The record gives the reactivity of an RNA of 170 nucleotides to DMS and 2A3.
It was measured as part of the RMDB library 15KLIB.
As a SHAPE reagent, 2A3 marks flexible, mostly unpaired nucleotides at the ribose 2'-OH.
The DMS profile rests on 24,152 reads.
RNA sequence: GGGAACGACUCGAGUAGAGUCGAAAACCCUCCCGGGUGUUUCCUCUUCCUAGGUCCGGAGUCGACCUCCAUCUGAUCCGUCCUGGCUCUCUUCGCCGGGGGAGCUCCCUCCCCAUCCUUGUCCUUUACGCAGCACACUUCGGUGUGCUGAAAAGAAACAACAACAACAAC
Reactivity to DMS in 0.01 (KOAc 150mM, MgCl2 10mM, bicine 150mM(pH8.5), 24C), signal-to-noise 4, nucleotides 027 to 129: c010c000c010u030c030c000c030g030g010g020u040g010u020u050u000c010c000u010c080u000u000c040c030u040a120g020g040u020c050c080g100g020a060g030u020c080g020a130c070c000u030c040c020a060u030c090u000g020a010u020c050c080g040u050c040c030u030g010g050c000u000c040u030c050u050u030c000g040c080c030g000g010g040g000g030a070g000c010u030c000c000c000u030c000c000c000c000a120u080c030c040u000u000g050u030c070c030u000u010u000a050c200g030
Reactivity to 2A3 in 0.01 (KOAc 150mM, MgCl2 10mM, bicine 150mM(pH8.5), 24C), signal-to-noise 4, nucleotides 027 to 129: c000c000c000u040c020c000c000g030g040g020u060g010u040u040u030c020c010u030c010u050u020c000c020u050a050g000g030u000c040c040g020g010a010g040u050c020g040a100c000c000u010c010c010a070u040c060u090g050a060u040c020c020g080u040c010c010u000g000g030c000u010c000u000c000u110u110c050g040c030c020g000g000g010g010g000a000g020c000u080c010c010c000u030c020c000c000c000a040u040c000c000u020u050g050u070c020c000u030u040u010a050c130g010